Description
Source: RMDB library OK3TST, as collected in RNAgym. Structure probing data (2A3 and DMS) for a 207-nucleotide construct. The RNA was probed in 150 mM KOAc, 10 mM MgCl2 and 150 mM bicine (pH 8.5) at 24 C. 2A3 adducts were read by reverse transcription with SuperScript II with manganese. For 2A3, 1,510 sequencing reads were counted. The DMS profile rests on 2,156 reads. Values cover nucleotides 27 to 156.
[RMDB]
RNA sequence: GGGAACGACUCGAGUAGAGUCGAAAAUCCCCGGGGAUGGCUGGUGCUCUGUGUGCUGGCCAUAUCGCUGGCCUCUAUGGUGACCGAGGACUUGUGCCGAGCACCAGACGGGAAGAAAGGGGAGGCAGGAAGACCUGGCAGACGGGGGCGGCCAGGCGUUAUCAUUACUUUUCGAAGUAAUGAUAACAAAAGAAACAACAACAACAAC
Reactivity to 2A3 in 0.01 (KOAc 150mM, MgCl2 10mM, bicine 150mM(pH8.5), 24C), signal-to-noise 2, nucleotides 027 to 156: u040c010c010c010c010g000g000g000g030a070u050g060g030c020u020g010g000u020g020c010u010c120u150g170u060g020u040g190c030u030g010g000c020c000a010u050a020u060c030g040c090u060g060g020c000c000u100c030u130a140u250g040g010u040g020a130c060c030g030a040g000g050a120c020u110u160g060u140g010c020c040g030a000g010c000a010c000c000a010g000a040c050g000g020g010a050a070g040a080a130a030g010g010g000g000a030g060g000c040a040g060g040a050a030g030a110c000c000u000g010g000c010a010g020a140c050g010g020g010g000g000c030g010g000c010c010a010g010g010c020
Reactivity to DMS in 0.01 (KOAc 150mM, MgCl2 10mM, bicine 150mM(pH8.5), 24C), signal-to-noise 1, nucleotides 027 to 156: u000c000c010c010c060g010g020g040g020a130u000g040g000c000u000g040g020u010g000c010u020c170u030g020u030g060u010g060c000u000g010g030c010c010a040u000a060u000c030g050c110u010g000g030c160c020u020c160u000a130u020g030g050u000g000a050c070c000g020a090g010g000a110c040u000u000g050u020g050c020c020g000a040g060c000a030c020c010a070g000a070c070g000g010g020a160a100g000a050a150a090g000g030g020g010a110g030g040c010a110g000g000a120a090g000a100c010c010u010g040g060c020a120g000a080c050g000g000g040g050g000c060g000g000c010c010a050g020g040c050